This 177-nucleotide RNA was probed chemically with DMS and 2A3. DMS adducts were read by reverse transcription with MarathonRT.

RNA sequence: GGGAACGACUCGAGUAGAGUCGAAAAGCAAUACCGGUGAUGCUAGACAUGGCUACAUGGCGGCCACGGCACACGGCCUGUGCGAAUUCAUCGACGCGUCCCCGUCGCCGUUUCACGUCUGCGCGACGCUGCACGGCAUAUUCGUAUGCCGUGCAGCAAAAGAAACAACAACAACAAC
Reactivity to DMS in 0.01 (KOAc 150mM, MgCl2 10mM, bicine 150mM(pH8.5), 24C), signal-to-noise 2, nucleotides 027 to 126: g020c030a090a060u050a130c070c000g020g020u010g010a140u000g030c030u010a090g020a190c080a050u000g010g010c020u030a110c100a060u020g000g020c100g020g010c040c040a040c020g010g000c070a040c080a050c020g000g000c100c140u020g030u000g020c020g000a060a040u010u000c080a090u000c050g020a010c090g000c070g000u010c050c030c020c010g000u000c020g000c060c030g010u000u010u000c090a090c130g000u000c070u010g030c090g010c050g000a060c100
Reactivity to 2A3 in 0.01 (KOAc 150mM, MgCl2 10mM, bicine 150mM(pH8.5), 24C), signal-to-noise 3, nucleotides 027 to 126: g030c020a010a160u010a130c020c030g050g000u070g030a160u030g020c030u060a060g040a150c080a100u090g030g030c030u080a040c060a140u090g180g000c060g000g000c060c010a020c030g010g050c030a020c000a000c090g040g040c020c060u170g020u070g080c010g020a070a090u130u050c060a070u090c070g010a020c060g000c000g050u050c000c000c000c000g000u030c000g000c020c030g040u020u110u080c160a120c080g070u070c050u120g050c040g000c020g110a030c030
Conditions: 150 mM KOAc, 10 mM MgCl2 and 150 mM bicine (pH 8.5), 24 C.
The data come from the RNA Mapping Database (RMDB), library OK2TST.